[RMDB]
RNA sequence: GGGAACGACUCGAGUAGAGUCGAAAAGAUAUGGAGUCGGAUGGGACAUGCCUGCGGAUCGGAAACGAUCCGGCAGGCAACAGCCCAGACGACUCCUAAGUCAAACCUCGUAGUUCGCUACGAGGAAGAGAUACUAAUUGUUCGCAAUUAGUAUCUCAAAAGAAACAACAACAACAAC
Reactivity to DMS in 0.01 (KOAc 150mM, MgCl2 10mM, bicine 150mM(pH8.5), 24C), signal-to-noise 5, nucleotides 027 to 126: g000a030u000a300u000g000g000a020g020u000c010g000g000a180u000g000g010g010a080c090a220u000g000c000c000u000g010c000g000g000a010u000c000g010g010a090a090a170c000g000a010u000c000c000g030g060c010a010g010g020c010a010a010c160a190g000c000c000c000a030g000a190c010g010a010c000u000c000c010u000a010a070g010u000c030a130a140a150c000c000u000c000g010u000a010g010u000u020c240g000c020u000a010c000g010a030g010g000a020a040
Reactivity to 2A3 in 0.01 (KOAc 150mM, MgCl2 10mM, bicine 150mM(pH8.5), 24C), signal-to-noise 4, nucleotides 027 to 126: g030a010u040a040u130g000g000a000g000u020c010g010g010a020u010g010g000g040a070c120a230u300g000c010c000u010g030c010g000g010a000u000c010g020g010a080a040a040c000g000a010u010c010c010g040g120c010a000g000g010c000a000a010c010a000g000c000c000c000a000g000a000c000g000a000c000u000c000c000u000a000a000g010u010c020a040a040a140c010c000u000c000g010u000a010g040u040u090c300g000c200u000a010c000g010a000g000g000a030a020
Structure probing data (DMS and 2A3) for a 177-nucleotide construct.
For 2A3 the reverse transcriptase was SuperScript II with manganese.
DMS (dimethyl sulfate) methylates the pairing face of unpaired adenines and cytosines.
The 2A3 profile rests on 20,035 reads.
Values cover nucleotides 27 to 126.
It was measured as part of the RMDB library TTRDES.